[RMDB]
RNA sequence: GGGAACGACUCGAGUAGAGUCGAAAAUUGGGAACUUGACCUUCUAAGAUCUUUGGAGGGAGACACUAGGGAUGUUCGAGCAGCAAGGCUCCUGCUAGGUUGUCCCAAUAUAAGGAAGGCAACUGACAAAGAUGGAAACAGGCUAAUGAAAAAGGGAGAAGGCACAUACUUUCGAGUAUGUGCCUUCAAAAGAAACAACAACAACAAC
Reactivity to 2A3 in 0.01 (KOAc 150mM, MgCl2 10mM, bicine 150mM(pH8.5), 24C), signal-to-noise 1, nucleotides 027 to 156: u050u000g010g000g000a080a140c040u070u060g090a120c000c070u040u070c120u150a160a160g020a120u050c040u300u190u130g020g000a040g020g140g000a000g070a000c170a020c050u030a020g000g060g040a050u070g100u190u220c050g020a030g010c040a000g000c000a020a140g000g020c000u050c000c000u010g050c020u000a000g010g020u010u000g020u030c020c000c000a010a010u140a010u040a060a000g050g000a000a130g010g070c000a000a000c020u020g030a020c070a080a080a010g030a010u020g160g000a000a110a000c020a040g020g000c020u080a040a040u090g070a000a060a050a000a000g100g020g000a130